[RMDB]
Structure probing data (DMS and 2A3) for a 177-nucleotide construct. The data come from the RNA Mapping Database (RMDB), library OK2TRN. The DMS profile rests on 1,499 reads. 2A3 adducts were read by reverse transcription with SuperScript II with manganese. The 2A3 profile rests on 2,206 reads. The RNA was probed in 150 mM KOAc, 10 mM MgCl2 and 150 mM bicine (pH 8.5) at 24 C.

RNA sequence: GGGAACGACUCGAGUAGAGUCGAAAAUUUGAUUCAUCGCAACUUUAGAAGCUCUAUCUGUCUUCGAGCGAAUAAAGUCCAUAACUGCUUCAGCUUGAGAUAAAUCAAUACGACCAUUUAAAAAGGCGUAGACACAAGAUUUCGAUCUUGUGUCUACAAAAGAAACAACAACAACAAC
Reactivity to DMS in 0.01 (KOAc 150mM, MgCl2 10mM, bicine 150mM(pH8.5), 24C), signal-to-noise 2, nucleotides 027 to 126: u000u000u020g010a040u000u000c030a000u000c020g010c070a060a070c040u000u000u010a080g000a150a180g010c000u000c030u000a040u010c110u000g000u000c080u000u000c230g030a090g020c030g010a110a120u010a030a040a040g020u000c110c100a080u020a060a110c060u010g000c080u000u010c050a060g030c120u010u000g010a040g000a050u010a000a040a040u000c010a050a020u000a090c120g020a160c010c030a160u000u000u000a010a010a080a100a060g020g020c210
Reactivity to 2A3 in 0.01 (KOAc 150mM, MgCl2 10mM, bicine 150mM(pH8.5), 24C), signal-to-noise 3, nucleotides 027 to 126: u020u030u040g010a020u010u050c030a010u010c040g010c030a030a030c020u040u060u050a040g000a090a020g040c020u010c010u070a170u060c080u150g270u070c060u090u030c080g030a030g010c040g030a050a010u080a050a050a000g000u010c020c010a100u120a170a110c030u060g080c080u130u130c060a030g070c020u040u000g030a000g000a050u040a030a050a010u010c010a000a020u050a050c030g070a100c040c060a040u130u250u260a050a180a000a010a000g080g010c060